[RMDB]
RNA sequence: GGGAACGACUCGAGUAGAGUCGAAAAUGAAAUUGAGAGUUACGUCGACAGGGCCUAUAAGAGGGACCUGGGGGAUUGCGCUAAUUCUGCGUUUCUCGACGUCAUGAAGUUAGCGACAGUAAUGCGGGGGGUUAACUAAAUUCGUUUAGUUAACCCCAAAAGAAACAACAACAACAAC
Reactivity to 2A3 in 0.01 (KOAc 150mM, MgCl2 10mM, bicine 150mM(pH8.5), 24C), signal-to-noise 2, nucleotides 027 to 126: u050g000a040a030a020u160u090g030a090g000a000g080u050u080a040c080g030u030c010g050a010c010a050g000g030g060c020c030u120a100u080a250a130g120a100g140g070g000a050c000c020u000g000g010g000g000g030a050u000u280g030c000g000c000u030a000a020u050u020c020u040g000c010g030u010u080u050c210u050c130g000a000c000g020u080c010a030u120g030a080a010g080u010u030a010g010c000g060a050c000a030g020u070a090a040u150g120c060g080g050
Reactivity to DMS in 0.01 (KOAc 150mM, MgCl2 10mM, bicine 150mM(pH8.5), 24C), signal-to-noise 3, nucleotides 027 to 126: u010g000a040a080a100u000u000g010a110g020a170g030u000u000a040c080g010u000c040g010a170c030a030g010g010g000c020c010u000a090u020a140a160g010a210g000g000g010a030c020c010u000g000g000g030g000g020a100u020u010g020c030g010c020u010a020a030u000u010c030u000g000c000g000u000u000u000c190u010c260g000a040c010g020u000c090a050u010g000a030a030g000u010u010a010g010c000g010a090c090a070g010u010a030a050u000g010c150g000g020
Chemical mapping of a 177-nucleotide RNA with 2A3 and DMS.
Reactivities are given for positions 27 through 126.
The reactions ran in a buffer of 150 mM KOAc, 10 mM MgCl2 and 150 mM bicine (pH 8.5), at 24 C.
For 2A3 the reverse transcriptase was SuperScript II with manganese.
The 2A3 profile rests on 1,174 reads.
It was measured as part of the RMDB library OK2TRN.